[RMDB]
RNA sequence: GGGAACGACUCGAGUAGAGUCGAAAAGAUAUGGAGACCAGGGAGCGUAGGGAUCGGAAACGAUCCCGAAACGCUUUGAUCUGGCUCCUAAGUCAAAGGCUGUGCCUUCUUCGGAAGGCACAGCCAAGCAAAAUCUAUAGUUCGCUAUAGAUUUUGCAAAAGAAACAACAACAACAAC
Reactivity to DMS in 0.01 (KOAc 150mM, MgCl2 10mM, bicine 150mM(pH8.5), 24C), signal-to-noise 1, nucleotides 027 to 126: g010a010u000a240u000g000g000a030g010a200c000c010a000g000g010g000a030g020c000g050u000a210g000g000g000a000u000c000g000g000a060a030a100c000g010a000u000c000c000c000g000a020a090a070c010g010c010u000u010u020g010a080u010c010u020g000g000c010u000c010c000u010a010a080g010u010c010a070a110a170g000g030c010u010g000u000g000c000c010u010u020c000u000u010c210g010g020a030a000g020g000c040a000c000a000g010c000c000a000a040

Source: RMDB library TTRDEL, as collected in RNAgym. An RNA of 177 nucleotides, treated with DMS and read out base by base. DMS adducts were read by reverse transcription with MarathonRT. DMS (dimethyl sulfate) methylates the pairing face of unpaired adenines and cytosines.